[RMDB]
RNA sequence: GGGAACGACUCGAGUAGAGUCGAAAACAAUAAGAGGGACAAGAAUCUGACCUGCACCUCCUCGUGGUGUCCCUCGGACACGUGCUCAACGAGCGGCCGACGCAGGCAGAAAAGACGAAGACGUCAAAUAAUAUCCUGAUUUCGAUCAGGAUAUUAUAAAAGAAACAACAACAACAAC
Reactivity to 2A3 in 0.01 (KOAc 150mM, MgCl2 10mM, bicine 150mM(pH8.5), 24C), signal-to-noise 1, nucleotides 027 to 126: c090a000a080u230a160a040g010a040g010g050g000a000c040a000a130g070a160a140u120c030u030g130a210c000c000u090g000c000a010c070c000u040c030c080u020c080g000u060g060g020u030g040u060c060c000c020u040c030g000g000a050c050a020c050g030u070g080c020u040c070a160a070c140g000a000g000c000g010g070c000c020g000a000c020g000c040a000g000g000c010a000g030a010a040a050a000g030a000c040g010a030a080g100a110c060g000u000c020a030a030

This 177-nucleotide RNA was probed chemically with 2A3. The RNA was probed in 150 mM KOAc, 10 mM MgCl2 and 150 mM bicine (pH 8.5) at 24 C.